[RMDB]
Structure probing data (DMS and 2A3) for a 177-nucleotide construct.
For 2A3 the reverse transcriptase was SuperScript II with manganese.
The DMS profile rests on 13,153 reads.
For 2A3, 17,113 sequencing reads were counted.
Source: RMDB library TTRDEL, as collected in RNAgym.
RNA sequence: GGGAACGACUCGAGUAGAGUCGAAAAGCGUGCAGCCGAUAUGGACGAGCUUGGAUUUAUAGGGUGAAGUGGUCGGAAACGACCAUGGAGGCCCUAUUGUCAGCUCAGUCCUAAGUCAAUAUGAGAACCAGAAUAGUAAGUUCGCUUACUAUUCUGGAAAAGAAACAACAACAACAAC
Reactivity to DMS in 0.01 (KOAc 150mM, MgCl2 10mM, bicine 150mM(pH8.5), 24C), signal-to-noise 8, nucleotides 027 to 126: g020c060g010u010g010c090a090g010c040c060g020a100u000a240u010g010g010a020c000g010a020g000c000u010u010g020g010a020u010u010u000a010u000a000g000g000g020u010g000a300a250g000u000g000g010u000c000g010g000a090a090a200c000g010a020c000c000a000u000g000g000a300g010g000c000c000c000u000a000u000u000g000u000c000a030g000c000u000c000a070g010u000c010c010u000a020a060g000u000c050a080a090u010a090u010g000a160g000a110a200
Reactivity to 2A3 in 0.01 (KOAc 150mM, MgCl2 10mM, bicine 150mM(pH8.5), 24C), signal-to-noise 7, nucleotides 027 to 126: g080c070g060u150g060c060a020g060c050c050g020a020u040a090u220g000g010a000c010g010a000g000c020u160u180g040g000a020u060u300u050a020u030a000g020g010g000u170g060a050a020g010u000g000g010u010c010g000g010a030a090a090c010g010a000c010c010a000u010g000g010a010g090g160c000c000c010u000a000u000u000g000u010c000a000g000c000u000c050a040g000u000c000c000u000a040a000g020u010c030a040a040u140a140u300g230a160g020a090a100